RNA sequence: GGGAACGACUCGAGUAGAGUCGAAAAGAAACAAAGAAAUGAGUUUUCUGCGACUGACGGAUUAUUGCAGAGCACUGCAAGGGAACAGAAAAACUCUUUUUCAGCCGACCGUCUGGGCACACCUGAAUCACGACCGGAAGCUUCGGCUUCCGGUCAAGAAACACUAAUUGUUCGCAAUUAGUGUUUCAAAAGAAACAACAACAACAAC
Reactivity to DMS in 0.01 (KOAc 150mM, MgCl2 10mM, bicine 150mM(pH8.5), 24C), signal-to-noise 1, nucleotides 027 to 156: g000a210a110a220c000a120a090a140g000a090a070a130u000g020a050g020u000u000u000u010c040u000g020c050g010a300c000u000g020a130c160g010g010a170u000u000a120u000u020g000c000a040g040a300g000c230a200c050u000g010c080a100a210g000g000g030a240a070c020a010g000a010a000a090a010a080c030u000c010u000u020u000u000u000c020a160g000c050c030g000a050c020c020g030u000c120u000g050g010g010c070a030c040a050c090c050u000g000a040a150u000c030a070c110g000a000c000c030g020g010a010a070g000c030u000u010c300g020g000c010u010u000c000c010g000g030u000c010a000a000
Reactivity to 2A3 in 0.01 (KOAc 150mM, MgCl2 10mM, bicine 150mM(pH8.5), 24C), signal-to-noise 2, nucleotides 027 to 156: g030a000a040a000c040a020a200a030g060a090a070a040u110g000a000g020u020u010u000u020c000u010g000c020g070a070c070u050g020a020c060g080g030a040u090u230a030u150u030g010c000a010g030a090g140c080a050c300u030g000c000a000a030g020g020g010a060a020c030a030g050a010a040a000a040a040c010u030c000u130u080u050u060u110c040a040g000c010c030g020a070c030c000g000u040c020u030g000g030g000c010a000c000a000c000c020u070g060a070a050u200c030a050c170g030a000c000c000g000g010a000a020g000c030u030u040c160g080g000c040u000u010c010c010g000g000u000c000a000a000